[RMDB]
RNA sequence: GGGAACGACUCGAGUAGAGUCGAAAAGUCUAGCGAAGGGAUCCCACCCGGGAAACACGCAAGUCGCGAAUUAGGCCGACCGGCCAAGGUCAAUCGCAGAACUCAACUGCAUGAGUAAGCUAGACGAGCUACUGGUACGAUUCGUCGUACCAGUAGCAAAAGAAACAACAACAACAAC
Reactivity to DMS in 0.01 (KOAc 150mM, MgCl2 10mM, bicine 150mM(pH8.5), 24C), signal-to-noise 2, nucleotides 027 to 126: g010u000c000u010a060g000c000g000a070a040g040g010g000a110u000c010c000c000a300c080c000c020g000g000g010a230a110a080c060a000c060g000c050a070a060g010u000c130g040c020g000a060a080u010u000a100g020g000c000c000g000a090c110c090g000g000c060c040a040a070g010g020u000c050a070a030u000c030g000c040a150g010a030a030c180u030c180a040a110c150u000g000c040a030u000g000a060g000u000a080a190g000c000u000a000g000a040c000g030a130
Reactivity to 2A3 in 0.01 (KOAc 150mM, MgCl2 10mM, bicine 150mM(pH8.5), 24C), signal-to-noise 2, nucleotides 027 to 126: g000u000c000u010a010g010c040g110a300a220g000g010g000a030u040c000c010c020a060c030c000c020g000g000g010a100a110a000c060a010c010g020c010a080a060g040u060c040g000c010g040a110a080u090u040a140g000g000c020c040g070a140c050c120g040g010c060c040a000a000g040g020u030c050a030a070u020c030g000c080a120g050a150a050c030u050c120a060a110c110u040g050c020a040u030g030a020g100u050a000a000g000c000u000a000g000a010c010g000a000